[RMDB]
RNA sequence: GGGAACGACUCGAGUAGAGUCGAAAAGAUAUGGAGUUAUCAAAGAGGUGGGUGUAAACCAAUGUAUAUCGGAAACGAUAUACAUUGGGAAGAAGCCCACUACCCACCUUUGUAAGACUCCUAAGUCCGUUGCAUAUAGCUUCGGCUAUAUGCAACGAAAAGAAACAACAACAACAAC
Reactivity to DMS in 0.01 (KOAc 150mM, MgCl2 10mM, bicine 150mM(pH8.5), 24C), signal-to-noise 1, nucleotides 027 to 126: g000a110u000a300u020g000g000a060g060u000u000a250u020c040a020a000a060g000a040g020g000u000g020g000g000u000g000u000a000a190a300c000c000a000a000u000g000u000a000u020a000u000c000g000g000a150a020a250c060g000a000u000a000u000a000c000a000u000u000g000g000g040a020a020g020a210a300g000c000c000c000a000c020u020a000c020c040c090a300c060c000u000u000u000g040u040a020a300g000a020c000u000c010c010u020a020a000g000u000c040